[RMDB]
RNA sequence: GGGAACGACUCGAGUAGAGUCGAAAAAGCAGUUAUAUCGAAAAACGAUAUAACUGCAACUAGGAUGGGGUGUGAUAGGUGGCACGGAGAAUUUUGGAUUCUCAGGGAUGGGUUCGAUUCUCAUAGUCCUAAAAGCAGUGUGUCAAGACGCACUGCACAUAAUACCGCGGUUCGCCGCGGUAUUAUGAAAAGAAACAACAACAACAAC
Reactivity to 2A3 in 0.01 (KOAc 150mM, MgCl2 10mM, bicine 150mM(pH8.5), 24C), signal-to-noise 4, nucleotides 027 to 156: a000g000c000a000g000u000u000a000u000a000u000c000g090a140a090a140a010a100c010g000a000u010a000u000a000a000c000u000g000c000a010a010c020u040a010g050g040a100u030g010g000g000g000u070g010u040g050a100u090a070g090g000u050g010g010c060a020c070g050g020a020g010a020a020u070u090u150u270g130g040a020u050u000c020u010c080a030g060g040g040a060u110g030g000g000u060u050c030g030a050u100u000c030u000c010a040u050a050g040u040c010c050u090a070a050a030a010g010c010a000g010u000g010u010g030u060c150a130a060g100a030c000g000c000a000c000u010g000c000a000
Reactivity to DMS in 0.01 (KOAc 150mM, MgCl2 10mM, bicine 150mM(pH8.5), 24C), signal-to-noise 1, nucleotides 027 to 156: a110g030c000a050g020u010u010a000u000a000u010c010g000a130a160a080a250a230c040g030a050u000a010u000a010a000c010u010g000c000a010a000c100u000a080g010g030a090u000g000g020g000g030u000g010u000g020a140u000a050g000g000u000g020g020c070a040c070g020g040a020g010a020a040u000u000u000u000g050g010a060u010u010c040u010c000a150g020g050g020a090u000g010g020g000u010u000c040g000a220u000u000c030u000c030a130u020a090g050u030c040c020u000a040a040a160a110g000c000a030g010u000g000u000g000u000c070a090a140g000a150c100g030c010a020c000u020g000c020a090